[RMDB]
RNA sequence: GGGAACGACUCGAGUAGAGUCGAAAAGGCGCCCGGACCGCGCCCGAAGGCGAUGGCGUCCACCGCGGACAGGGCGACGCCGGCCUCGUCGAGCAGGUCGCGGACCAUCGGCAGCAGGCGCUGGGCACGACGGUAAAUGAUUCGUCAUUUACCGUCGAAAAGAAACAACAACAACAAC
Reactivity to DMS in 0.01 (KOAc 150mM, MgCl2 10mM, bicine 150mM(pH8.5), 24C), signal-to-noise 4, nucleotides 027 to 126: g010g000c070g040c030c020c070g010g010a090c040c010g020c050g010c040c000c020g010a130a120g010g000c000g010a070u000g010g010c090g000u010c030c130a240c030c040g000c090g000g000a130c140a130g010g000g030c300g010a020c020g010c020c010g010g000c040c040u000c050g010u010c030g010a120g020c110a130g010g000u010c020g020c020g020g000a150c020c010a080u010c070g000g010c050a090g000c080a090g000g010c040g020c010u000g000g010g020c090a180
Reactivity to 2A3 in 0.01 (KOAc 150mM, MgCl2 10mM, bicine 150mM(pH8.5), 24C), signal-to-noise 2, nucleotides 027 to 126: g030g010c010g010c020c050c010g000g100a080c040c010g000c010g000c000c010c020g070a090a010g030g000c010g100a070u110g030g010c010g010u000c000c040a090c020c050g040c090g080g100a100c040a210g040g020g000c010g000a000c020g020c040c000g050g080c000c000u010c020g030u020c010g050a070g050c120a070g030g010u080c030g010c000g110g000a030c000c010a050u100c030g070g030c020a050g020c030a030g040g000c010g000c010u080g000g050g010c110a060